RNA sequence: GGGAACGACUCGAGUAGAGUCGAAAAGACCAAUAACAGAAUGCACCACAGCGUAAAAUCAUCUGAUUGGGUGAGUUGGUCGCACCGCCAUUUGACGAACGAACGCCAAGCCUAUGCCGUCUUUGUGAACACGAGCUAGUCUUCGGACUAGCUCGAACCUUAUGCGUCUGUUCGCAGACGCAUAAGGAAAAGAAACAACAACAACAAC
Reactivity to 2A3 in 0.01 (KOAc 150mM, MgCl2 10mM, bicine 150mM(pH8.5), 24C), signal-to-noise 3, nucleotides 027 to 156: g040a020c010c020a040a020u110a060a020c010a050g130a170a090u080g030c040a030c050c020a050c030a060g050c040g070u120a020a100a090a080u080c050a020u000c030u060g090a210u090u150g020g010g010u020g010a060g000u010u090g030g010u010c010g010c050a020c010c020g040c020c020a070u110u050u110g060a030c050g020a130a040c020g020a060a010c030g030c040c010a020a020g000c030c000u020a030u070g030c020c000g030u030c010u030u060u060g090u010g030a070a010c050a020c120g000a000g000c000u000a010g000u010c010u020u030c160g030g010a000c010u000a000g000c000u000c000g000a000a000
Reactivity to DMS in 0.01 (KOAc 150mM, MgCl2 10mM, bicine 150mM(pH8.5), 24C), signal-to-noise 2, nucleotides 027 to 156: g000a150c040c020a090a100u000a020a300c100a290g010a100a080u000g010c020a060c020c010a080c050a050g000c050g010u000a060a070a070a050u010c030a050u000c040u000g000a110u010u000g040g070g000u000g010a090g030u000u000g010g010u000c000g040c000a090c040c020g010c030c010a150u000u000u020g020a080c050g040a040a050c040g000a090a060c060g000c000c040a020a160g020c000c000u000a070u000g020c030c050g000u000c090u000u000u000g040u010g020a010a060c110a150c020g010a030g000c000u000a030g020u000c000u000u010c300g060g000a050c010u000a000g000c000u020c000g000a020a010
About this RNA: Chemical mapping of a 207-nucleotide RNA with 2A3 and DMS. Values cover nucleotides 27 to 156. DMS adducts were read by reverse transcription with MarathonRT. It was measured as part of the RMDB library M2RFPK. High 2A3 reactivity points to a flexible backbone, as in loops and unpaired stretches. The DMS profile rests on 2,441 reads. The reactions ran in a buffer of 150 mM KOAc, 10 mM MgCl2 and 150 mM bicine (pH 8.5), at 24 C. 2A3 adducts were read by reverse transcription with SuperScript II with manganese.